[RMDB]
RNA sequence: GGGAACGACUCGAGUAGAGUCGAAAACGGUUACGCCUUCUUUACCGUUAUCAAGGAAGGUACUCGGCCAUGCUAAGGGAAUCAUUAUUCCUUAGGCGCAUGUCGCCGCCAGCAUGGUGUGAGGGGAAAAAGUAUGCUGGGUUCGCCCAGCAUACAAGAACUAAUGUAUGUUCGCAUACAUUAGUUCAAAAGAAACAACAACAACAAC
Reactivity to 2A3 in 0.01 (KOAc 150mM, MgCl2 10mM, bicine 150mM(pH8.5), 24C), signal-to-noise 9, nucleotides 027 to 156: c000g000g010u020u030a030c060g020c000c000u000u000c000u010u030u040a020c010c010g260u110u100a050u090c080a010a000g030g000a000a000g000g000u040a050c010u000c010g030g000c000c000a000u000g000c000u050a080a090g040g000g020a010a010u030c050a170u150u300a050u120u050c010c000u040u120a070g000g000c000g010c040a160u260g110u300c020g010c040c000g000c020c040a000g000c000a000u010g010g030u050g140u150g030a030g010g030g020g070a020a110a020a020a010g000u000a000u000g000c000u000g000g000g020u030u050c070g110c010c000c000a000g000c000a000u000a000c000a000a010
Reactivity to DMS in 0.01 (KOAc 150mM, MgCl2 10mM, bicine 150mM(pH8.5), 24C), signal-to-noise 4, nucleotides 027 to 156: c020g010g010u000u010a040c020g000c000c000u000u010c000u000u000u000a030c000c010g010u000u000a030u010c100a000a030g020g020a020a010g020g030u000a060c010u000c000g020g010c000c000a010u000g010c000u010a180a140g030g010g000a030a040u000c220a180u010u010a270u000u010c010c000u000u000a070g030g030c010g030c020a130u000g030u000c010g030c030c000g000c110c090a050g020c020a040u000g020g020u000g010u010g010a050g010g010g000g000a060a070a100a110a140g010u000a010u000g010c010u000g000g000g020u000u000c300g020c010c010c000a020g000c000a000u000a000c000a070a080